Structure probing data (2A3 and DMS) for a 177-nucleotide construct. For DMS, 3,310 sequencing reads were counted. It was measured as part of the RMDB library OK2TRN. DMS adducts were read by reverse transcription with MarathonRT.

RNA sequence: GGGAACGACUCGAGUAGAGUCGAAAAUGUAGCACAGCUCGGCGGUAUCCGAGGAACGCCAGCCCAUCUUGUCCAGCUUGCGGGUCACCUCAAAGCCGGGGGUGUCCUUUUCCACCACCAGCAGCGAGUUCAGGACAUUAUUCGUAAUGUCCUGAACAAAAGAAACAACAACAACAAC
Reactivity to 2A3 in 0.01 (KOAc 150mM, MgCl2 10mM, bicine 150mM(pH8.5), 24C), signal-to-noise 2, nucleotides 027 to 126: u080g000u020a020g010c040a020c030a100g080c030u030c030g030g000c070g070g070u090a070u050c070c040g010a050g030g010a070a020c040g010c020c010a010g010c000c010c000a080u050c050u140u140g070u030c010c020a020g000c030u040u080g020c050g020g000g060u080c060a050c040c010u020c020a070a100a030g030c020c000g010g020g000g000g000u000g020u020c010c000u010u050u040u000c010c040a060c000c020a010c020c000a010g040c020a000g030c040g140a040
Reactivity to DMS in 0.01 (KOAc 150mM, MgCl2 10mM, bicine 150mM(pH8.5), 24C), signal-to-noise 3, nucleotides 027 to 126: u000g010u000a110g010c030a090c100a080g000c020u000c040g010g010c050g000g030u000a090u000c110c100g030a080g010g000a100a060c070g010c010c030a100g010c020c030c050a060u010c050u000u000g000u000c010c070a120g020c030u010u000g030c100g010g000g000u010c080a090c030c000u000c040a040a120a150g000c080c070g040g010g000g010g010u000g000u010c040c020u010u000u010u000c030c020a090c060c030a060c020c010a030g010c050a070g010c120g010a110